[RMDB]
RNA sequence: GGGAACGACUCGAGUAGAGUCGAAAAAGUCACCUAUUACGAUAGGUGACAUUUGAACCAGCGAACAAUUCAGUUGCGAGAUUCGAGGUUUCAGUCUGAAACAUAGUAGCCAUUACGAUGGCUACAACUCACUCCCGACUGUUCGCAGUCGGGAGAACAGGUAGAGGUUGUUCGCAACCUCUACCUGAAAAGAAACAACAACAACAAC
Reactivity to 2A3 in 0.01 (KOAc 150mM, MgCl2 10mM, bicine 150mM(pH8.5), 24C), signal-to-noise 1, nucleotides 027 to 156: a010g000u020c000a000c010c020u000a000u060u020a030c300g050a020u010a000g000g000u000g010a000c000a000u020u010u150g070a020a020c020c000a030g120c000g000a010a010c040a110a270u030u010c020a020g000u000u000g020c010g000a000g000a000u000u000c020g000a020g100g010u180u300u300c020a020g110u040c030u000g020a000a010a000c080a020u300a060g000u000a000g000c040c010a010u010u100a030c270g150a010u010g000g010c000u000a000c000a000a010c010u080c040a060c010u000c000c040c000g000a000c000u000g050u090u140c260g000c210a000g000u000c000g000g000g000a000g000a000a000